[RMDB]
RNA sequence: GGGAACGACUCGAGUAGAGUCGAAAACGAGCGGCAACUUGCCAAAAAGGUUGCCCUGCACGGUGGUGGUGGUGGUGACUCUUCUGGCUUGGGAACGGAAGGCAGUGCGUCUGCCUCUGUGAAUGGACAUAGUCACGCAUUUCGAUGCGUGACUAUGAAAAGAAACAACAACAACAAC
Reactivity to 2A3 in 0.01 (KOAc 150mM, MgCl2 10mM, bicine 150mM(pH8.5), 24C), signal-to-noise 4, nucleotides 027 to 126: c020g010a010g030c060g020g000c010a000a020c010u050u090g050c070c000a080a050a010a010a000g020g000u010u010g030c000c000c010u040g050c020a070c060g090g020u130g030g060u060g000g020u020g000g060u080g000g010u030g020a040c000u000c000u180u000c030u020g040g000c000u040u080g020g000g050a050a000c010g020g030a060a060g050g000c010a010g020u070g120c090g090u050c030u010g010c010c010u000c020u000g020u030g050a070a090u080g010g000a000
Reactivity to DMS in 0.01 (KOAc 150mM, MgCl2 10mM, bicine 150mM(pH8.5), 24C), signal-to-noise 3, nucleotides 027 to 126: c080g020a080g020c120g030g010c030a080a040c020u020u000g010c120c220a050a100a020a080a010g010g010u010u000g000c030c000c040u010g000c020a060c070g030g000u010g000g020u000g000g020u030g000g020u010g000g010u010g010a050c060u030c050u050u000c080u000g010g000c020u000u000g020g010g020a150a040c030g000g010a060a060g010g010c010a030g050u060g010c210g000u050c020u000g000c010c000u010c050u000g000u000g010a140a070u020g020g000a300
Structure probing data (2A3 and DMS) for a 177-nucleotide construct. As a SHAPE reagent, 2A3 marks flexible, mostly unpaired nucleotides at the ribose 2'-OH. For 2A3, 4,419 sequencing reads were counted. Source: RMDB library OK1LIB, as collected in RNAgym. Conditions: 150 mM KOAc, 10 mM MgCl2 and 150 mM bicine (pH 8.5), 24 C. For DMS, 5,969 sequencing reads were counted.